[RMDB]
RNA sequence: GGGAACGACUCGAGUAGAGUCGAAAAGUAAGAUGAUUCGUCAUCUUACGAACCCGAUGAAGCGGCACAUACCGAGGUUCAUACAUCUAAGAGUGCAAAUAAUGGCGCGUGGUUUCGACCACGCGAAGCCGUGCAUAUUCUUCGGAAUAUGCACGGCAAAAGAAACAACAACAACAAC
Reactivity to 2A3 in 0.01 (KOAc 150mM, MgCl2 10mM, bicine 150mM(pH8.5), 24C), signal-to-noise 1, nucleotides 027 to 126: g000u030a000a000g010a000u010g000a000u000u050c060g030u000c050a000u000c000u010u000a000c000g000a010a030c000c010c030g030a070u170g040a030a080g010c090g020g000c090a050c000a080u190a130c000c050g000a050g070g000u060u090c030a020u050a240c040a070u050c050u090a120a000g080a030g040u030g000c000a000a040a070u250a110a060u160g210g000c000g000c010g000u000g010g050u060u030u020c180g030a020c000c010a000c000g000c020g010a000a000
Reactivity to DMS in 0.01 (KOAc 150mM, MgCl2 10mM, bicine 150mM(pH8.5), 24C), signal-to-noise 1, nucleotides 027 to 126: g000u000a000a000g020a000u000g010a000u000u040c210g020u000c000a020u000c000u000u000a000c000g030a040a240c020c000c010g030a040u010g020a080a090g000c070g010g000c000a100c090a080u000a130c090c040g000a040g000g010u000u000c130a080u000a040c150a010u000c040u000a060a220g000a110g000u010g000c090a080a040a060u000a070a020u000g060g000c000g050c000g010u000g010g020u000u010u000c220g010a020c030c000a010c010g000c020g040a020a040
This 177-nucleotide RNA was probed chemically with 2A3 and DMS. 2A3 is a SHAPE reagent: it acylates the 2'-hydroxyl of flexible nucleotides of all four kinds. Conditions: 150 mM KOAc, 10 mM MgCl2 and 150 mM bicine (pH 8.5), 24 C. For DMS, 763 sequencing reads were counted. DMS adducts were read by reverse transcription with MarathonRT. For 2A3 the reverse transcriptase was SuperScript II with manganese. The 2A3 profile rests on 1,000 reads. Source: RMDB library M2PK50, as collected in RNAgym.